Background
This 177-nucleotide RNA was probed chemically with 2A3. Values cover nucleotides 27 to 126. The RNA was probed in 150 mM KOAc, 10 mM MgCl2 and 150 mM bicine (pH 8.5) at 24 C. For 2A3 the reverse transcriptase was SuperScript II with manganese.
[RMDB]
RNA sequence: GGGAACGACUCGAGUAGAGUCGAAAAUAAGAAAGAGACACUAAAUAAGAACAAAAUAUUGCCGUAGAUUUAAUGAUUCAAUCAUGUGUGUCAAAUUUGUUCUCCAUUGCAUCUUCCUAUUUGACAACCCAUCAUCGACCUUCGGGUCGAUGAUGGGAAAAGAAACAACAACAACAAC
Reactivity to 2A3 in 0.01 (KOAc 150mM, MgCl2 10mM, bicine 150mM(pH8.5), 24C), signal-to-noise 1, nucleotides 027 to 126: u150a030a030g050a000a020a000g000a080g000a000c090a010c180u270a160a000a300u210a020a020g030a000a000c030a020a000a000a000u250a220u080u000g000c000c000g000u060a000g020a090u000u000u210a000a000u150g240a110u020u300c040a000a010u060c000a000u060g120u000g000u020g010u160c120a000a060a170u000u000u060g000u000u000c000u080c050c000a050u000u300g090c000a230u010c000u000u000c000c000u120a150u150u000u050g050a120c110a010a020